[RMDB]
RNA sequence: GGGAACGACUCGAGUAGAGUCGAAAAUUUGAAGAUUACAUACAUCAAAAGGUGCUUGAACUGUCUCAAGAGAUAUCUCCUCUUGCAAGACCUUGGGCGCAACUGUUAGAUGGCCUAAAUCAUAAGGUGUAUGUUAGCUAUUCGUAGCUAACAUACAAAAAGAAACAACAACAACAAC
Reactivity to 2A3 in 0.01 (KOAc 150mM, MgCl2 10mM, bicine 150mM(pH8.5), 24C), signal-to-noise 5, nucleotides 027 to 126: u110u070u130g110a110a040g030a070u060u060a060c030a040u120a020c010a010u020c030a060a040a060a040g040g000u010g040c010u030u060g050a080a070c060u120g020u020c000u000c050a010a000g000a000g020a040u060a210u190c100u040c040c000u020c010u000u020g010c060a060a030g010a010c010c000u060u040g010g010g000c030g000c040a090a110c030u020g060u170u080a050g010a050u030g020g000c000c010u080a090a070a040u100c070a060u070a240a050g090g010
Reactivity to DMS in 0.01 (KOAc 150mM, MgCl2 10mM, bicine 150mM(pH8.5), 24C), signal-to-noise 8, nucleotides 027 to 126: u010u010u010g020a140a140g000a080u010u000a090c120a120u010a130c020a030u000c020a060a100a140a060g010g010u000g000c010u000u000g000a050a070c150u000g010u000c010u000c010a010a010g010a020g010a080u010a120u010c230u010c140c010u000c010u000u000g000c120a080a030g000a020c010c300u000u000g000g010g000c020g000c020a040a070c110u000g010u000u010a090g010a030u000g010g000c050c050u000a040a040a070u000c090a090u010a090a080g000g010
Structure probing data (2A3 and DMS) for a 177-nucleotide construct. The reactions ran in a buffer of 150 mM KOAc, 10 mM MgCl2 and 150 mM bicine (pH 8.5), at 24 C.